[RMDB]
RNA sequence: GGGAACGACUCGAGUAGAGUCGAAAACAUGGUCCUUUGUUUUGAAACUUUGAUCACUGAUUGUUCGCAGUCUUUCAUUGUGGAACUACUCUUUCACUUUGAAUGUUUUGAGAGGUUCCUUUGUUCAGAUCAGUCCGAUUUCGUUUCUGGGUGGGUCCUACACAACACCGUUCGCGGUGUUGUGUAGAAAAGAAACAACAACAACAAC
Reactivity to 2A3 in 0.01 (KOAc 150mM, MgCl2 10mM, bicine 150mM(pH8.5), 24C), signal-to-noise 2, nucleotides 027 to 156: c040a090u100g020g060u120c040c000u090u100u110g100u080u120u060u130g090a050a030a020c050u110u100u120g020a030u100c000a020c050u060g020a070u110u070g060u140u080c120g040c100a060g040u000c000u000u090u020c030a060u020u030g030u020g010g020a010a010c000u070a130c020u090c000u030u030u020c030a020c020u080u100u130g110a180a040u150g040u030u170u150u100g080a080g000a030g010g000u060u090c000c000u060u100u050g020u010u040c010a010g000a050u020c010a030g050u040c050c030g020a060u020u120u080c010g010u000u010u060c080u040g010g030g000u090g020g000g000u030c000